[RMDB]
RNA sequence: GGGAACGACUCGAGUAGAGUCGAAAAAAACUGGAAUGUACACACUGGUCAAGCUUUAUUACCUGCUGCGCAUCUAAAGGAAAAACAUAACAAUCUUGUGAACCAGAAAGAUACCCAGAGCAAAAGCAAUAAAGUACAGGAUUAUUGCCAAAACAACACGGUUGAUAUGUUUCGACAUAUCAACCGUAAAAGAAACAACAACAACAAC
Reactivity to DMS in 0.01 (KOAc 150mM, MgCl2 10mM, bicine 150mM(pH8.5), 24C), signal-to-noise 1, nucleotides 027 to 156: a090a030a110c060u000g010g040a120a140u000g000u000a030c060a110c070a120c020u000g000g030u000c020a140a110g010c040u020u000u000a030u010u000a030c040c010u000g010c030u000g020c100g010c030a050u000c030u000a040a100a160g000g020a080a080a020a040a080c000a110u030a060a130c080a100a070u020c050u000u020g010u000g000a090a160c010c000a120g020a130a130a060g000a140u020a010c050c030c010a200g000a100g010c050a060a040a050a010g000c030a010a030u000a000a010a050g040u000a150c060a130g000g000a130u020u000a050u010u000g000c000c000a060a020a050a120c060a150a110c150
Reactivity to 2A3 in 0.01 (KOAc 150mM, MgCl2 10mM, bicine 150mM(pH8.5), 24C), signal-to-noise 2, nucleotides 027 to 156: a000a020a040c060u050g040g020a110a050u080g080u140a010c070a010c030a030c050u030g000g000u040c050a050a000g000c030u110u110u050a090u110u120a170c030c000u010g050c000u080g020c070g010c040a040u030c060u110a040a040a010g010g000a040a030a040a030a000c020a010u070a050a040c060a060a090u030c040u050u050g020u040g030a060a080c010c000a000g030a100a110a000g020a000u020a030c000c000c040a000g030a010g010c030a000a030a000a100g000c000a000a040u000a030a060a010g030u060a020c010a030g020g000a010u010u030a000u060u000g000c000c040a020a140a060a110c040a040a030c010